[RMDB]
RNA sequence: GGGAACGACUCGAGUAGAGUCGAAAAGAAGACGUGACGAAAAGUCACGAAAAGGUGCAAUGUCCUUUAAGCACCAAACACGGAAAAACCGUGAAAGGACAAACGAGUGGGAGACCACUCGAAAAGACACCGAUCGACCAUUCGUGGUCGAUCGGUGAAAAGAAACAACAACAACAAC
Reactivity to 2A3 in 0.01 (KOAc 150mM, MgCl2 10mM, bicine 150mM(pH8.5), 24C), signal-to-noise 1, nucleotides 027 to 126: g220a000a000g110a000c000g000u080g000a000c000g030a000a300a270a000g000u000c000a000c040g020a020a000a000a000g020g000u020g050c020a190a270u140g000u040c020c000u000u100u000a050a000g030c000a000c000c010a000a000a000c000a000c010g030g010a280a060a000a000a000c000c000g000u000g000a000a010a000g000g000a000c020a000a090a000c010g000a000g040u000g000g000g020a260g000a000c000c000a000c000u000c000g000a000a000a000a000g060a000
Annotation
Structure probing data (2A3) for a 177-nucleotide construct. 2A3 adducts were read by reverse transcription with SuperScript II with manganese. Values cover nucleotides 27 to 126. The RNA was probed in 150 mM KOAc, 10 mM MgCl2 and 150 mM bicine (pH 8.5) at 24 C. For 2A3, 629 sequencing reads were counted.